Source: RMDB library OK3TST, as collected in RNAgym.
Structure probing data (2A3) for a 207-nucleotide construct.
For 2A3, 520 sequencing reads were counted.
The reactions ran in a buffer of 150 mM KOAc, 10 mM MgCl2 and 150 mM bicine (pH 8.5), at 24 C.
Reactivities are given for positions 27 through 156.
For 2A3 the reverse transcriptase was SuperScript II with manganese.
RNA sequence: GGGAACGACUCGAGUAGAGUCGAAAAAGGAACUGUGGGUUUAGACUUCUGGGUACCCAAGGAGUUAUGGAAUUAGAUUCGUGGGUCCCCAGUGAGUUAUGGAUCUAGAUUUCUAGGUCCCCAAUGGACUAGAGGCCUAGACUCCUGGGUCCCCCAGGGCGUAAAGUGUUUUCGAACACUUUACGCCAAAAGAAACAACAACAACAAC
Reactivity to 2A3 in 0.01 (KOAc 150mM, MgCl2 10mM, bicine 150mM(pH8.5), 24C), signal-to-noise 1, nucleotides 027 to 156: a020g100g000a070a070c030u050g030u070g040g000g000u020u100u070a030g010a070c010u010u000c000u080g000g000g000u020a000c060c020c010a010a090g030g000a000g010u090u040a110u130g130g040a060a230u230u060a140g030a060u080u050c020g010u050g010g020g000u020c030c000c000c000a000g030u040g040a020g000u120u080a040u140g030g000a000u010c000u000a040g020a260u060u120u000c020u000a030g100g150u060c010c030c000c020a080a190u240g020g000a010c010u000a020g000a020g040g030c020c000u000a000g010a030c020u000c030c000u030g010g120g000u000c040c000c010c010c020a070g000